[RMDB]
Chemical mapping of a 177-nucleotide RNA with DMS and 2A3. The reactions ran in a buffer of 150 mM KOAc, 10 mM MgCl2 and 150 mM bicine (pH 8.5), at 24 C. 2A3 adducts were read by reverse transcription with SuperScript II with manganese. Values cover nucleotides 27 to 126. It was measured as part of the RMDB library 15KREP. For DMS, 2,946 sequencing reads were counted.

RNA sequence: GGGAACGACUCGAGUAGAGUCGAAAAGACGGUCCUGAGAACUCUUAUCUUCCUGCUUAGAAGAGGAGUCUCCUGGACGCUUCCGCCCGCUCGGGAUGGGCCUCAGUGCCGACGAGGAGUCCGCAGGUCACAGUUACAGUUUCGACUGUAACUGUGAAAAAGAAACAACAACAACAAC
Reactivity to DMS in 0.01 (KOAc 150mM, MgCl2 10mM, bicine 150mM(pH8.5), 24C), signal-to-noise 3, nucleotides 027 to 126: g010a100c090g020g010u000c000c010u000g000a120g000a040a080c000u000c010u000u020a190u000c000u000u000c000c110u010g010c280u010u000a100g000a010a030g040a020g010g010a030g000u000c030u000c020c070u000g000g000a030c030g020c030u000u000c040c070g020c010c010c010g010c070u010c030g010g000g020a080u020g010g000g010c000c030u000c120a070g010u000g010c030c050g010a060c050g000a100g000g000a160g010u010c020c080g010c110a120g000g010
Reactivity to 2A3 in 0.01 (KOAc 150mM, MgCl2 10mM, bicine 150mM(pH8.5), 24C), signal-to-noise 2, nucleotides 027 to 126: g040a040c100g070g050u000c000c000u050g020a040g020a140a070c010u020c020u090u150a080u120c010u020u020c020c030u130g160c110u200u250a040g000a020a000g030a010g000g000a000g000u000c030u000c000c060u020g020g000a010c000g020c010u010u000c010c010g020c010c000c000g050c020u030c050g040g000g030a060u050g040g050g000c020c020u060c070a100g050u090g090c010c020g030a040c010g020a020g080g000a000g010u010c000c000g030c070a030g000g070